[RMDB]
RNA sequence: GGGAACGACUCGAGUAGAGUCGAAAAUUGCAUACCGCAUGACGGAUGAACAAUUGAAGAUCGGACGGCUUCAAUACAUGAGUGUGAUAAACCAGUUUGCAGAAUGCCAGGCAAAUGACAGUUGGCCUUCAUACGCAAACGGAGAGCCUGAAAUUGAAUGUCUAACGUAAUUCGUUACGUUAGACAUAAAAGAAACAACAACAACAAC
Reactivity to 2A3 in 0.01 (KOAc 150mM, MgCl2 10mM, bicine 150mM(pH8.5), 24C), signal-to-noise 9, nucleotides 027 to 156: u060u050g010c020a030u090a250c020c010g040c140a140u190g050a130c040g020g030a030u060g040a110a050c040a100a020u020u050g020a040a010g040a100u130c090g040g050a030c040g020g000c000u050u040c040a040a050u100a090c060a070u110g030a070g080u070g030u050g050a080u100a050a060a040c020c030a030g010u000u010u010g010c020a030g000a050a010u010g020c010c010a030g080g070c050a090a130a110u220g070a100c040a080g090u070u010g010g000c000c000u000u000c000a010u040a110c140g000c010a010a010a010c010g000g000a040g010a000g020c010c030u050g050a080a090a090u130u160g060a090
Reactivity to DMS in 0.01 (KOAc 150mM, MgCl2 10mM, bicine 150mM(pH8.5), 24C), signal-to-noise 5, nucleotides 027 to 156: u000u020g000c020a100u000a120c030c010g000c040a130u000g020a140c020g020g000a080u000g020a110a120c100a130a140u000u000g000a090a070g010a060u010c040g030g010a090c050g020g010c030u000u010c030a020a060u000a080c060a090u000g010a120g020u000g010u000g010a070u010a040a080a100c030c010a110g010u000u000u000g010c010a160g020a050a070u000g000c030c040a060g030g010c040a060a060a100u010g010a110c120a110g020u000u000g010g020c000c040u000u000c040a070u000a120c100g020c020a020a030a040c030g000g000a130g010a090g030c020c030u010g010a050a070a170u000u000g000a130